[RMDB]
RNA sequence: GGGAACGACUCGAGUAGAGUCGAAAAAACAGAAUGGAAAGGGCGCUAACUUUCUCAUUUGUGCAUCAGGGUUAUUUAAGACCAUCUUGGCUGCGCCCUAAAAUGAUCACGGGUCCUACCAAUGGGAGGUAGCCCAUGUUUGGAAGAACACAGAUCAGUCCAUUCAAUGAUUCGUCAUUGAAUGGACAAAAGAAACAACAACAACAAC
Reactivity to DMS in 0.01 (KOAc 150mM, MgCl2 10mM, bicine 150mM(pH8.5), 24C), signal-to-noise 1, nucleotides 027 to 156: a050a070c060a110g000a060a110u000g020g000a120a080a030g000g000g060c040g080c050u010a030a120c020u000u000u000c040u010c060a110u010u000u000g020u000g120c020a140u000c050a090g000g000g020u000u000a120u000u010u030a110a100g010a080c010c000a040u020c080u000u000g030g010c030u010g010c010g020c040c010c000u000a000a010a020a090u000g020a020u000c020a120c100g040g000g010u020c060c030u000a050c010c010a130a050u000g010g020g000a170g010g000u000a080g010c010c010c000a020u000g010u000u000u000g050g000a110a120g000a060a040c000a060c070a100g050a050u000c050a130
Reactivity to 2A3 in 0.01 (KOAc 150mM, MgCl2 10mM, bicine 150mM(pH8.5), 24C), signal-to-noise 2, nucleotides 027 to 156: a010a000c060a040g150a050a070u090g030g040a090a060a040g020g000g000c010g000c080u100a040a050c020u050u140u000c010u000c030a030u020u070u300g100u070g000c030a020u040c080a090g010g010g010u080u090a160u140u230u130a120a040g040a030c000c000a030u090c070u060u090g070g000c000u030g010c020g000c000c000c010u000a020a010a000a020u060g000a000u020c000a020c120g000g000g010u090c010c010u010a020c010c000a060a070u050g010g020g030a060g050g000u010a020g010c020c000c000a010u020g030u000u010u050g030g010a030a010g010a060a010c080a000c040a070g030a000u020c000a010
Annotation: The record gives the reactivity of an RNA of 207 nucleotides to DMS and 2A3. The data come from the RNA Mapping Database (RMDB), library OK3TST. The reactions ran in a buffer of 150 mM KOAc, 10 mM MgCl2 and 150 mM bicine (pH 8.5), at 24 C. DMS adducts were read by reverse transcription with MarathonRT.